[RMDB]
RNA sequence: GGGAACGACUCGAGUAGAGUCGAAAAUACGGUGUCGCUCGCACCCGGCUCAUGCACGCCGGCGCGUCCGAGUCCUUGAUGGUGUAACGGUCUUGCACUCGUGGGCUGUCGGCGGAUCACGGGAUCGGGCCAUGAAGCGGUUCGCCGCUUCAUGGCCAAAAGAAACAACAACAACAAC
Reactivity to 2A3 in 0.01 (KOAc 150mM, MgCl2 10mM, bicine 150mM(pH8.5), 24C), signal-to-noise 1, nucleotides 027 to 126: u180a000c000g000g020u010g000u010c080g000c110u040c000g090c000a010c010c030c030g010g020c040u090c040a140u150g070c180a060c030g000c000c010g000g000c000g030c030g220u010c000c000g000a000g030u000c000c030u000u070g020a050u010g080g150u030g010u210a070a050c140g130g040u030c010u000u070g010c000a030c020u010c040g030u250g000g040g010c060u080g000u000c020g010g000c030g010g020a040u020c030a080c110g040g040g000a000u010c060g060
Structure probing data (2A3) for a 177-nucleotide construct. The RNA was probed in 150 mM KOAc, 10 mM MgCl2 and 150 mM bicine (pH 8.5) at 24 C.